[RMDB]
RNA sequence: GGGAACGACUCGAGUAGAGUCGAAAAUGAGGCCAACAUCAAAGAUGCGUACCUAGCUGCGUUUCAACCUGCGUGGGUUGAGGCGGCUUAGCGGAUUAGGGCGUUCUGCCCCAGUGGUACCAUUACCCUAUGCAAAGUCUGCAUGCAGGCAGGGUAGCUAGAGAUUUUACUUCGGUAAAAUCUCUAGAAAAGAAACAACAACAACAAC
Reactivity to 2A3 in 0.01 (KOAc 150mM, MgCl2 10mM, bicine 150mM(pH8.5), 24C), signal-to-noise 5, nucleotides 027 to 156: u120g030a060g020g060c030c020a040a030c020a120u140c100a090a070a070g060a040u090g030c000g020u080a190c010c010u020a020g010c010u030g020c020g030u030u020u020c010a010a010c010c010u200g150c220g190u300g020g000g000u000u000g000a000g010g000c020g030g000c020u020u070a000g000c010g020g070a060u110u230a050g010g000g000c030g090u250u070c100u200g010c010c000c000c010a060g090u070g040g000u020a080c000c010a010u010u060a020c010c010c000u030a040u060g030c020a050a070a090g080u040c030u040g040c020a060u070g020c010a000g090g000c020a000g030g000g000u010a050g020
Reactivity to DMS in 0.01 (KOAc 150mM, MgCl2 10mM, bicine 150mM(pH8.5), 24C), signal-to-noise 2, nucleotides 027 to 156: u000g000a070g020g000c050c030a040a090c010a070u000c050a110a220a180g000a080u000g010c030g010u000a050c020c000u000a080g030c010u000g000c010g030u000u010u000c020a010a020c000c000u000g010c300g030u020g000g030g020u010u000g020a050g030g050c010g030g000c030u010u000a090g000c030g020g000a130u000u000a040g000g020g000c020g000u000u000c110u010g030c020c000c010c010a060g020u010g040g040u000a050c010c020a110u010u010a030c010c000c000u000a100u000g000c020a040a100a170g000u010c040u000g000c080a300u010g030c050a060g000g030c060a070g000g000g040u010a060g020
The record gives the reactivity of an RNA of 207 nucleotides to 2A3 and DMS. For DMS, 5,893 sequencing reads were counted. The RNA was probed in 150 mM KOAc, 10 mM MgCl2 and 150 mM bicine (pH 8.5) at 24 C. It was measured as part of the RMDB library VIROID.